An RNA of 177 nucleotides, treated with DMS and 2A3 and read out base by base.
The DMS profile rests on 646 reads.

[RMDB]
RNA sequence: GGGAACGACUCGAGUAGAGUCGAAAAUGAUUAUAAAAGUUCCUAGGAGGCUAGAAGAGCCAACCAACAGAGAAGGGAAAGCAGUCUGUUCUGAACAUAGGGACAUAAGUUCAUUCAUGCCAAGUAUAUCGUAAUAGUGGUUCGCCACUAUUACGAUAAAAGAAACAACAACAACAAC
Reactivity to DMS in 0.01 (KOAc 150mM, MgCl2 10mM, bicine 150mM(pH8.5), 24C), signal-to-noise 1, nucleotides 027 to 126: u000g000a080u000u010a090u040a120a190a150a180g000u000u000c010c000u000a050g000g060a300g000g000c010u020a110g020a080a090g000a040g020c010c000a120a140c060c070a030a040c030a020g000a090g010a070a110g010g000g000a100a120a100g000c120a080g000u000c040u000g050u000u000c030u000g000a050a090c110a130u000a050g030g000g000a020c040a010u000a040a120g020u000u000c040a000u020u000c030a070u000g000c040c050a150a140g000u010a040u000
Reactivity to 2A3 in 0.01 (KOAc 150mM, MgCl2 10mM, bicine 150mM(pH8.5), 24C), signal-to-noise 2, nucleotides 027 to 126: u020g010a000u050u140a060u170a180a210a020a040g000u000u020c000c000u000a010g000g060a040g000g050c010u080a030g050a280a050g040a210g040c000c020a010a030c010c010a000a060c020a010g070a010g030a120a080g100g000g060a140a070a000g090c010a030g050u000c000u050g040u040u060c050u060g040a000a000c030a130u090a040g030g000g000a010c030a030u130a070a030g050u000u020c020a000u000u120c010a020u100g120c000c000a000a010g060u050a100u010
Description
Values are in units of 0.01, from 0 to 300, in steps of 10. The 2A3 profile rests on 1,042 reads. Values cover nucleotides 27 to 126. Conditions: 150 mM KOAc, 10 mM MgCl2 and 150 mM bicine (pH 8.5), 24 C. In probing experiments dimethyl sulfate is read out at A N1 and C N3, which are open when not base-paired. 2A3 adducts were read by reverse transcription with SuperScript II with manganese.